[RMDB]
An RNA of 177 nucleotides, treated with 2A3 and DMS and read out base by base.
For 2A3 the reverse transcriptase was SuperScript II with manganese.
The reactions ran in a buffer of 150 mM KOAc, 10 mM MgCl2 and 150 mM bicine (pH 8.5), at 24 C.
It was measured as part of the RMDB libraries RFM100 and RFMREP.
DMS adducts were read by reverse transcription with MarathonRT.

RNA sequence: GGGAACGACUCGAGUAGAGUCGAAAAUGUGUAUAAAGCAGAAGUUAGAACAGUUGAGUUAGAGAAUAGGGUAGCUGAGAAUGAGUUUAGUUGAGCUGAGGACAAAUUUGUUAAUUCCUACCCAAAAGUACUGCGUCUUAUUCGUAAGACGCAGUACAAAAGAAACAACAACAACAAC
Reactivity to 2A3 in 0.01 (KOAc 150mM, MgCl2 10mM, bicine 150mM(pH8.5), 24C), signal-to-noise 2, nucleotides 027 to 126: u040g020u000g000u010a000u010a080a040a000g060c060a010g040a030a080g180u080u110a040g000a220a030c000a000g000u060u080g060a050g000u050u090a090g030a000g000a040a110u080a060g000g000g030u030a020g000c170u150g100a030g050a070a060u080g050a000g100u020u020u100a040g000u080u000g100a040g000c060u020g030a010g080g060a000c000a110a050a070u000u020u090g110u020u040a000a040u160u000c000c000u000a030c000c000c100a010a010a010a010
Reactivity to DMS in 0.01 (KOAc 150mM, MgCl2 10mM, bicine 150mM(pH8.5), 24C), signal-to-noise 2, nucleotides 027 to 126: u020g010u000g000u000a100u040a090a100a080g000c050a050g000a040a070g000u020u010a020g010a060a010c070a110g000u000u000g000a170g000u010u010a110g000a110g010a090a080u020a090g000g000g010u010a040g000c090u000g000a060g020a040a040u000g000a040g000u000u010u010a090g000u000u000g010a130g010c070u000g030a070g000g000a030c030a100a020a040u000u010u000g000u000u000a040a210u000u030c070c010u000a020c010c060c040a050a030a080a050